[RMDB]
Source: RMDB library OK2TST, as collected in RNAgym. This 177-nucleotide RNA was probed chemically with 2A3 and DMS.

RNA sequence: GGGAACGACUCGAGUAGAGUCGAAAACGUAUCCAGGUGCAGUCUUCGGCCGGGCAUCGCUCGAAGGCAGCCGUGAGCAUGGCAAGGCCACGCACGGUCUUGCCGGCCUGAAACAGCAUAUUGCCGACGUAUGACCGCUAUUCGUAGCGGUCAUACGAAAAGAAACAACAACAACAAC
Reactivity to 2A3 in 0.01 (KOAc 150mM, MgCl2 10mM, bicine 150mM(pH8.5), 24C), signal-to-noise 1, nucleotides 027 to 126: c040g010u070a110u110c070c010a050g060g040u080g060c050a030g000u010c000u010u030c000g030g000c040c000g000g030g080c040a120u240c040g040c020u030c060g040a010a000g000g000c020a020g010c010c010g010u040g030a060g000c050a130u180g010g000c000a020a030g000g000c000c000a050c080g260c030a120c130g010g000u000c050u000u010g030c010c000g010g000c000c010u010g040a000a090a020c020a010g040c020a030u100a080u200u190g050c010c010g030a070
Reactivity to DMS in 0.01 (KOAc 150mM, MgCl2 10mM, bicine 150mM(pH8.5), 24C), signal-to-noise 1, nucleotides 027 to 126: c070g020u000a170u020c070c080a050g000g050u000g020c020a060g010u000c020u000u000c030g000g000c150c070g000g030g000c060a050u000c110g010c020u000c050g080a130a090g010g020c020a070g000c040c040g020u000g000a060g030c020a120u030g010g000c000a000a010g000g020c000c000a180c270g000c300a090c120g020g040u010c010u000u000g000c000c020g000g000c000c030u000g030a060a040a030c150a060g010c130a130u000a140u000u000g000c000c000g020a200

For 2A3 the reverse transcriptase was SuperScript II with manganese. DMS adducts were read by reverse transcription with MarathonRT.